This 177-nucleotide RNA was probed chemically with DMS and 2A3. Reactivities are given for positions 27 through 126. 2A3 adducts were read by reverse transcription with SuperScript II with manganese. For 2A3, 5,169 sequencing reads were counted. For DMS, 3,689 sequencing reads were counted.
[RMDB]
RNA sequence: GGGAACGACUCGAGUAGAGUCGAAAAGAUAUGGACAAAGCUCCUCGCAGCCGUUUGACGUCGGAAACGACCGAGGCUGAACUACGAGCCCUUUGUCCUAAGUCAAAGUUCAAGUUCGCUUGAACAAGUUAACGAUACUCUUCGGAGUAUCGUUAACAAAAGAAACAACAACAACAAC
Reactivity to DMS in 0.01 (KOAc 150mM, MgCl2 10mM, bicine 150mM(pH8.5), 24C), signal-to-noise 4, nucleotides 027 to 126: g000a020u000a210u020g010g000a010c010a010a010a010g000c040u010c080c010u000c020g020c000a010g000c000c000g020u000u010u020g010a130c300g020u010c010g010g010a050a030a090c020g020a010c000c090g000a120g010g010c000u000g010a030a040c060u010a290c020g000a020g000c300c190c010u010u000u000g000u000c020c000u000a010a100g000u000c030a080a080a100g000u000u010c000a020a000g000u000u010c290g020c010u000u000g000a010a020c010a070a090
Reactivity to 2A3 in 0.01 (KOAc 150mM, MgCl2 10mM, bicine 150mM(pH8.5), 24C), signal-to-noise 2, nucleotides 027 to 126: g000a000u020a000u040g010g000a000c000a000a010a000g020c030u110c050c000u010c070g050c010a010g020c000c000g080u170u300u300g170a140c140g010u000c000g000g000a030a020a010c020g030a010c000c060g100a160g000g000c000u000g020a020a010c050u230a070c040g000a010g020c050c020c040u030u010u000g000u020c000c000u010a020a000g010u010c020a070a110a070g000u000u000c000a000a000g010u050u110c300g050c140u010u000g000a010a010c010a020a040